[RMDB]
RNA sequence: GGGAACGACUCGAGUAGAGUCGAAAAGAUCGACGCGGUGAACAAGCAGAUCACCGGUCUGCGCAACACCUUCGUCCGCGCGAACGACCGCGGCGCGAAGGCGCUGUUCUCCUCGCCGGCCGUCCCGACGAUGCCUGUGUCCGAGCCGUGGGAUGACCAGGAGAAACUGUUUCGACAGUUUCUCCUGAAAAGAAACAACAACAACAAC
Reactivity to DMS in 0.01 (KOAc 150mM, MgCl2 10mM, bicine 150mM(pH8.5), 24C), signal-to-noise 1, nucleotides 027 to 156: g020a080u010c010g000a030c000g010c190g000g010u000g010a020a010c010a080a180g050c000a040g020a030u000c030a300c230c130g030g000u000c000u070g030c020g040c000a090a040c000a010c020c010u020u000c010g010u030c010c020g010c010g060c060g000a110a160c120g030a070c130c010g030c030g010g010c100g070c010g030a050a000g000g000c000g000c020u000g010u000u000c010u010c000c010u010c000g040c010c000g020g060c010c030g030u000c000c010c010g000a090c030g000a040u000g000c030c010u000g010u000g000u000c040c010g000a060g010c010c010g000u000g030g030g000a140u000g000a140c090
Reactivity to 2A3 in 0.01 (KOAc 150mM, MgCl2 10mM, bicine 150mM(pH8.5), 24C), signal-to-noise 2, nucleotides 027 to 156: g050a140u050c010g000a010c000g010c030g000g050u010g000a020a010c010a060a060g000c010a000g010a020u020c040a060c230c150g020g000u000c010u010g010c050g000c000a010a060c010a030c050c000u000u000c000g010u000c000c000g000c000g000c000g070a210a090c110g080a070c050c050g000c000g000g000c100g000c000g060a010a000g000g010c030g040c020u020g020u000u030c030u050c000c010u010c010g020c000c000g020g000c000c020g030u020c000c000c010g020a040c030g010a040u100g030c010c010u160g040u070g040u220c040c040g030a020g000c010c050g050u060g000g000g050a040u090g040a070c050
Source: RMDB library OK3TST, as collected in RNAgym.
Chemical mapping of a 207-nucleotide RNA with DMS and 2A3.
2A3 adducts were read by reverse transcription with SuperScript II with manganese.
The reactions ran in a buffer of 150 mM KOAc, 10 mM MgCl2 and 150 mM bicine (pH 8.5), at 24 C.
Values are in units of 0.01, from 0 to 300, in steps of 10.